[RMDB]
RNA sequence: GGGAACGACUCGAGUAGAGUCGAAAACUAGCGGUCACCGCAAGGUUCCUGUCGGACGACAGGCUAUCUUCUGCGGUCCCGCACUGCGGGCCGCAACCGGCAAUGCCGGCUUUUACUAACGGGCCGAACGCGGUGACCAGUUCGCUGGUCACCGCGUAAAAGAAACAACAACAACAAC
Reactivity to 2A3 in 0.01 (KOAc 150mM, MgCl2 10mM, bicine 150mM(pH8.5), 24C), signal-to-noise 1, nucleotides 027 to 126: c000u010a000g000c000g000g000u040c090a010c110c000g060c000a010a000g040g000u000u190c000c000u000g000u000c070g260g270a200c180g000a000c270a000g000g040c000u090a070u000c010u160u060c000u000g000c000g050g000u080c000c000c000g000c040a070c000u130g000c000g010g010g060c000c000g270c000a080a160c000c000g000g000c160a150a150u300g000c000c000g000g000c000u220u140u080u110a120c040u020a010a010c000g000g200g000c070c000g010a110